[RMDB]
RNA sequence: GGGAACGACUCGAGUAGAGUCGAAAACGCGCUCCCUACAAUUAUCAAUAAUUGAGCAUGUGGCCAUCACAAGGAUGAUGUAACACCAGCAGUUACGGGACUUAGUCGAUAACUGCCAACAAGGUGUGCCAGGUGCACUCUUCGGAGUGCACCUGGCAAAAGAAACAACAACAACAAC
Reactivity to 2A3 in 0.01 (KOAc 150mM, MgCl2 10mM, bicine 150mM(pH8.5), 24C), signal-to-noise 1, nucleotides 027 to 126: c000g020c060g040c060u000c000c000c000u020a000c000a000a120u180u100a300u180c300a130a300u110a050a000u140u110g020a000g000c000a000u120g260u260g120g000c000c000a000u060c000a000c080a000a300g000g120a090u150g000a000u020g080u160a000a000c000a000c000c000a000g200c070a000g000u000u000a060c040g000g000g000a000c000u090u180a120g050u150c000g050a050u000a000a000c000u000g010c000c090a000a050c080a000a090g000g020u000g110u110